Structure probing data (2A3) for a 207-nucleotide construct. For 2A3 the reverse transcriptase was SuperScript II with manganese. Source: RMDB library M2RFPK, as collected in RNAgym. Conditions: 150 mM KOAc, 10 mM MgCl2 and 150 mM bicine (pH 8.5), 24 C. The 2A3 profile rests on 2,576 reads.
RNA sequence: GGGAACGACUCGAGUAGAGUCGAAAACAGGUUCGUGCUUGCGACUUACACGUAGGGCGAGGGGUGGGCGAAAGUUGCCAUGAGACCGUAACUUUCGUAGUCAUUGAUAAAGGGGCAGGUCUCGCUCAAAAGACGUUGGUCUUCGGACCAACGUCAACAUCUAGUUGACGUUCGCGUCAACUAGAUGAAAAGAAACAACAACAACAAC
Reactivity to 2A3 in 0.01 (KOAc 150mM, MgCl2 10mM, bicine 150mM(pH8.5), 24C), signal-to-noise 4, nucleotides 027 to 156: c040a020g000g060u120u090c020g020u100g090c080u090u110g050c050g070a100c100u070u170a060c100a020c080g070u080a060g040g010g020c100g020a170g020g010g040g080u220g020g000g000c020g010a000a000a000g000u000u020g010c060c070a120u160g060a000g000a030c000c000g000u010a000a000c000u000u010u000c020g000u010a040g040u020c060a140u030u220g040a040u140a100a090a030g010g030g000g000c040a010g020g010u010c000u000c000g000c020u070c030a080a130a000a000g000a000c020g000u000u000g010g000u000c000u040u030c150g020g010a000c000c000a000a000c000g000u000c000a000a010